[RMDB]
RNA sequence: GGGAACGACUCGAGUAGAGUCGAAAAGUCCAGCUUGUUCGCAAGCUGGACAAAAAGAUAUGGAAGAAUACAGGGAGAUCCGGAUCGGAAACGAUCCGAAGAUCGAAGAACUGUGUUCUUCCUAAGUCAAAAAUCAACCAAGUUCGCUUGGUUGAAAGUGCUGUAGAAAGUUCGCUUUCUACAGCACAAAAGAAACAACAACAACAAC
Reactivity to 2A3 in 0.01 (KOAc 150mM, MgCl2 10mM, bicine 150mM(pH8.5), 24C), signal-to-noise 1, nucleotides 027 to 156: g010u000c000c010a000g000c000u030u020g010u120u150c170g010c160a000a010g000c000u000g010g020a000c000a000a000a010a000a020g000a010u010a010u020g000g010a000a000g000a000a010u030a020c000a010g020g050g020a240g000a050u010c000c020g000g000a000u000c000g000g000a000a010a000c000g010a000u000c000c000g000a030a040g000a000u010c010g020a130a020g000a030a010c000u000g020u000g000u000u000c000u000u000c000c000u000a000a000g010u040c040a160a060a030a090a070u090c010a000a000c000c000a000a000g000u050u070c140g050c240u000u000g000g000u010u030g000a000a010a010
Conditions: 150 mM KOAc, 10 mM MgCl2 and 150 mM bicine (pH 8.5), 24 C. An RNA of 207 nucleotides, treated with 2A3 and read out base by base. The 2A3 profile rests on 1,605 reads.